[RMDB]
RNA sequence: GGGAACGACUCGAGUAGAGUCGAAAAGAUUCGAUGUUUAUAAAAUGCUGGAUGAGGCAAUUUGCUUGCAAAGGGCUCGCUAGUAAUAAUGGAUAUUGGGUUUUAUGAAGAUUGCAGAAUACAGGCACUUACUGCGUAACUUCGGUUACGCAGUAAGAAAAGAAACAACAACAACAAC
Reactivity to DMS in 0.01 (KOAc 150mM, MgCl2 10mM, bicine 150mM(pH8.5), 24C), signal-to-noise 2, nucleotides 027 to 126: g000a030u000u010c050g000a050u000g000u000u010u020a070u010a040a090a130a120u020g020c030u000g040g000a050u000g000a110g000g030c000a020a070u020u000u000g000c010u030u000g000c050a010a020a030g000g010g000c010u010c040g020c020u020a040g010u010a050a040u000a120a030u000g020g020a000u000a010u000u000g000g000g010u000u000u000u000a050u000g010a080a080g030a080u000u000g000c030a040g000a110a050u010a050c050a140g020g000c150a080
Reactivity to 2A3 in 0.01 (KOAc 150mM, MgCl2 10mM, bicine 150mM(pH8.5), 24C), signal-to-noise 2, nucleotides 027 to 126: g020a010u030u000c010g000a020u010g030u010u020u000a100u020a020a140a030a030u020g010c000u020g040g120a300u050g030a070g120g030c060a050a050u040u010u010g000c010u060u090g000c000a020a040a080g020g010g040c000u020c010g020c010u030a020g040u050a030a060u090a110a030u050g000g020a000u000a020u050u060g080g010g000u040u050u000u070a150u090g040a050a020g050a090u040u120g000c020a010g040a140a010u130a120c040a050g070g000c020a010
Structure probing data (DMS and 2A3) for a 177-nucleotide construct. The reactions ran in a buffer of 150 mM KOAc, 10 mM MgCl2 and 150 mM bicine (pH 8.5), at 24 C. 2A3 adducts were read by reverse transcription with SuperScript II with manganese. DMS adducts were read by reverse transcription with MarathonRT.